[RMDB]
RNA sequence: GGGAACGACUCGAGUAGAGUCGAAAAUGCCGGCCCGUAUACCUUCCUCGCCGCCGACGCCCUGGUGCUCAAGGUGCGCGAGGCAGGCCGCGUCGUCGGGGUGCACACCUUGAUCGCCACCGGCGUCGAUAAUCGGGGAUUUCGAUCCCCGAUUAUCAAAAGAAACAACAACAACAAC
Reactivity to DMS in 0.01 (KOAc 150mM, MgCl2 10mM, bicine 150mM(pH8.5), 24C), signal-to-noise 5, nucleotides 027 to 126: u010g010c020c010g000g000c020c010c030g000u010a110u010a090c050c020u000u000c010c020u000c050g010c040c030g020c090c030g000a090c140g010c010c000c130u010g010g010u010g010c090u000c050a030a110g000g020u000g010c140g010c010g010a080g020g000c060a030g010g010c030c080g010c060g010u000c180g000u010c010g000g000g010g020u010g010c090a090c060a030c020c020u000u000g000a020u000c020g000c030c030a110c110c130g000g010c000g010u000c050
Reactivity to 2A3 in 0.01 (KOAc 150mM, MgCl2 10mM, bicine 150mM(pH8.5), 24C), signal-to-noise 3, nucleotides 027 to 126: u100g020c020c010g020g010c030c020c010g040u090a090u080a130c010c010u020u030c010c000u020c000g020c000c010g030c010c020g030a010c020g000c020c010c070u130g090g000u180g010c000u030c050a040a020g000g000u010g000c060g000c030g020a030g030g010c000a000g010g000c000c010g020c010g160u120c030g030u050c010g010g030g000g040u100g010c070a030c000a020c070c010u010u050g020a070u060c010g010c000c010a060c030c010g010g000c010g010u010c070